[RMDB]
RNA sequence: GGGAACGACUCGAGUAGAGUCGAAAAGCUAGUCGGUGACGACUAGCAGCCACGACUAAGGUCGUGGGAAGAUGCUCACAAACUGGUCAGUGGCAUCAAUAACUACAUCAUGACCAGAAACCGGAUUAACGGAUAACAUUAAAAUUUAAGAUGUAGGCCUAGGCAAAAUCUUCGGAUUUUGCCUAGGAAAAGAAACAACAACAACAAC
Reactivity to 2A3 in 0.01 (KOAc 150mM, MgCl2 10mM, bicine 150mM(pH8.5), 24C), signal-to-noise 1, nucleotides 027 to 156: g000c010u000a000g000u000c000g000g070u110g000a100c000g000a000c000u000a000g000c000a000g020c000c000a000c000g000a010c000u100a150a140g170g000u000c000g020u000g000g000g000a000a070g000a000u030g000c080u110c300a000c000a000a200a150c030u020g000g000u010c000a000g000u000g000g000c000a000u000c000a000a060u100a090a060c010u030a020c000a030u050c050a070u110g010a000c000c000a000g040a060a010a000c000c000g030g030a170u150u130a150a090c020g040g080a050u150a110a080c050a070u070u280a020a020a110a040u110u200u090a080a000g000a000u000g000u000a000g020g000
Chemical mapping of a 207-nucleotide RNA with 2A3. The reactions ran in a buffer of 150 mM KOAc, 10 mM MgCl2 and 150 mM bicine (pH 8.5), at 24 C. 2A3 adducts were read by reverse transcription with SuperScript II with manganese. Source: RMDB library OK3TST, as collected in RNAgym. For 2A3, 439 sequencing reads were counted.